[RMDB]
RNA sequence: GGGAACGACUCGAGUAGAGUCGAAAAGACGGGAAGCUGGAAAGUACGAAAGUACGAAACAGCGAAAAUAAAACCGCGAAAAUAAAAUGAUCAUAUUUUUUUUUUUUUAUGAUCGCCGUCGAGCGGAGGCUUAUGAUAUGUUCGCAUAUCAUAAGCCAAAAGAAACAACAACAACAAC
Reactivity to DMS in 0.01 (KOAc 150mM, MgCl2 10mM, bicine 150mM(pH8.5), 24C), signal-to-noise 2, nucleotides 027 to 126: g010a020c010g000g000g010a220a160g000c000u000g000g000a050a070a290g000u010a020c000g010a140a070a120g010u000a000c000g000a090a070a130c000a000g020c000g000a100a070a050a030u010a090a040a110a110c010c020g000c000g000a090a100a120a050u000a010a000a040a130u030g000a010u000c000a010u000a000u010u000u000u010u030u010u030u000u000u030u060u120u000a030u000g000a000u000c000g000c000c000g000u000c010g000a130g000c010g000g010a280
Reactivity to 2A3 in 0.01 (KOAc 150mM, MgCl2 10mM, bicine 150mM(pH8.5), 24C), signal-to-noise 3, nucleotides 027 to 126: g010a000c010g010g000g040a030a040g010c010u000g020g070a230a110a020g000u000a000c010g060a160a060a010g000u000a010c010g040a090a110a010c000a000g030c020g000a010a010a020a010u090a010a110a000a020c010c020g000c010g040a070a070a050a020u160a020a100a020a080u190g000a000u000c010a000u020a090u050u040u010u010u000u000u000u000u020u030u000u100u030a000u010g010a000u000c000g010c030c000g000u000c000g020a000g000c000g000g010a020
Description: Structure probing data (DMS and 2A3) for a 177-nucleotide construct. Reactivities are given for positions 27 through 126. For DMS the reverse transcriptase was MarathonRT. 2A3 adducts were read by reverse transcription with SuperScript II with manganese.